[RMDB]
This 177-nucleotide RNA was probed chemically with 2A3 and DMS. 2A3 adducts were read by reverse transcription with SuperScript II with manganese.
RNA sequence: GGGAACGACUCGAGUAGAGUCGAAAAAUCUUUUCUUAUUAACACUGUCUUGAAGUCCAUUGAAUCAGGUCAACUGGAGACGUGGAUUUAUCGCACAGUGGAAGAGCACAAACCAUUGGUUUGGGUCUCUUCAAAGGCUCUUCGGAGCCUUUGAAGAAAAAGAAACAACAACAACAAC
Reactivity to 2A3 in 0.01 (KOAc 150mM, MgCl2 10mM, bicine 150mM(pH8.5), 24C), signal-to-noise 8, nucleotides 027 to 126: a000u020c010u030u050u030u000c020u040u090a150u060u050a070a010c000a000c000u000g010u020c010u060u300g040a020a000g020u000c010c000a020u050u170g060a050a040u030c000a010g030g180u170c110a190a160c120u040g060g030a050g010a030c030g010u000g000g000a000u010u040u060a140u100c020g000c040a000c000a000g000u000g010g000a030a010g020a010g020c010a010c010a070a010a010c010c020a260u070u300g000g020u010u010u000g030g000g040u020c010
Reactivity to DMS in 0.01 (KOAc 150mM, MgCl2 10mM, bicine 150mM(pH8.5), 24C), signal-to-noise 6, nucleotides 027 to 126: a090u010c030u020u000u010u010c020u020u020a080u020u020a090a230c000a000c000u000g000u000c020u000u020g010a060a040g010u000c000c000a000u000u000g010a260a180u010c000a010g000g010u030c250a110a180c010u000g000g010a050g010a270c230g010u020g010g000a010u000u000u000a040u040c020g000c270a020c000a010g000u000g000g010a010a020g000a020g000c030a070c000a000a000a020c010c010a210u030u050g040g020u000u000u000g010g000g010u010c040
The RNA was probed in 150 mM KOAc, 10 mM MgCl2 and 150 mM bicine (pH 8.5) at 24 C. Reactivities are given for positions 27 through 126.